RNA sequence: GGGAACGACUCGAGUAGAGUCGAAAAUGUUACGAGAGUUAUGACUCAUAAUUGAGAUAUGAUAUCGACACGUGCAUGAGUAUGGGCAUAGCUCAGGAGGUUCACACAUGUGCGUUAAGGAGCCAUAGUGGUGUUCAGUGUUCGCGCUGAGCACCACAAAAGAAACAACAACAACAAC
Reactivity to 2A3 in 0.01 (KOAc 150mM, MgCl2 10mM, bicine 150mM(pH8.5), 24C), signal-to-noise 4, nucleotides 027 to 126: u190g010u050u110a080c050g020a030g000a010g090u000u020a020u010g100a050c000u000c020a010u040a140a090u150u160g080a060g030a030u070a020u060g070a030u080a030u090c030g010a010c010a000c050g010u040g000c000a020u020g000a010g030u030a050u030g010g000g000c020a040u060a080g000c010u000c010a000g010g120a040g030g020u070u070c040a000c000a000c000a010u020g020u040g030c000g010u020u020a030a030g070g000a000g020c000c000a030u050a040
Reactivity to DMS in 0.01 (KOAc 150mM, MgCl2 10mM, bicine 150mM(pH8.5), 24C), signal-to-noise 6, nucleotides 027 to 126: u020g010u010u030a100c070g000a080g000a060g000u010u000a020u000g010a100c010u000c000a010u010a050a100u020u010g000a130g000a100u000a050u000g000a120u020a080u020c020g010a170c150a030c070g010u000g000c000a030u000g000a100g000u010a040u000g000g000g000c010a090u010a100g000c000u010c010a030g000g010a050g020g000u020u010c070a060c070a090c000a030u010g020u020g000c050g010u000u020a080a080g010g010a070g020c030c020a090u030a100
An RNA of 177 nucleotides, treated with 2A3 and DMS and read out base by base. The DMS profile rests on 17,764 reads. The reactions ran in a buffer of 150 mM KOAc, 10 mM MgCl2 and 150 mM bicine (pH 8.5), at 24 C. It was measured as part of the RMDB library OK1LIB. DMS adducts were read by reverse transcription with MarathonRT. Reactivities are rounded to 0.1 and cut off at 0 and 3.